[RMDB]
RNA sequence: GGGAACGACUCGAGUAGAGUCGAAAAGUCGUCGACUACUGGCAGGCCGACCCGCGGAUGAACCGGAACACGUCGGCGAUCUUCGUCGGCAACCCGCGGCACCCGGUCGGCGCUGACGGCUGGGGCGGAACGACAGAGCAUUCGUGCUCUGUCGUUCAAAAGAAACAACAACAACAAC
Reactivity to 2A3 in 0.01 (KOAc 150mM, MgCl2 10mM, bicine 150mM(pH8.5), 24C), signal-to-noise 1, nucleotides 027 to 126: g060u010c010g000u000c000g050a090c030u140a030c060u190g060g000c010a020g000g080c010c000g000a030c020c000c040g020c130g020g030a300u070g050a050a120c030c010g090g000a080a030c120a000c190g020u020c000g000g010c000g040a050u010c040u170u060c010g020u000c000g000g000c010a020a040c010c000c000g050c040g000g000c010a030c030c020c010g000g000u000c000g010g020c050g030c020u000g030a000c000g000g000c030u020g000g050g010g020c060g050
Reactivity to DMS in 0.01 (KOAc 150mM, MgCl2 10mM, bicine 150mM(pH8.5), 24C), signal-to-noise 2, nucleotides 027 to 126: g030u000c000g010u000c020g040a180c100u000a130c090u000g010g000c020a050g050g020c010c000g030a020c040c040c120g060c110g020g000a060u010g010a110a080c090c040g000g020a060a080c200a110c280g010u000c000g030g000c000g010a030u000c130u010u000c020g030u000c020g030g000c020a130a080c120c010c000g020c120g000g020c130a010c050c000c000g000g000u000c000g000g000c020g010c010u000g010a040c000g040g000c040u010g020g040g010g020c170g000
Record summary:
An RNA of 177 nucleotides, treated with 2A3 and DMS and read out base by base. It was measured as part of the RMDB library OK2TST. DMS adducts were read by reverse transcription with MarathonRT. 2A3 adducts were read by reverse transcription with SuperScript II with manganese. For DMS, 1,123 sequencing reads were counted.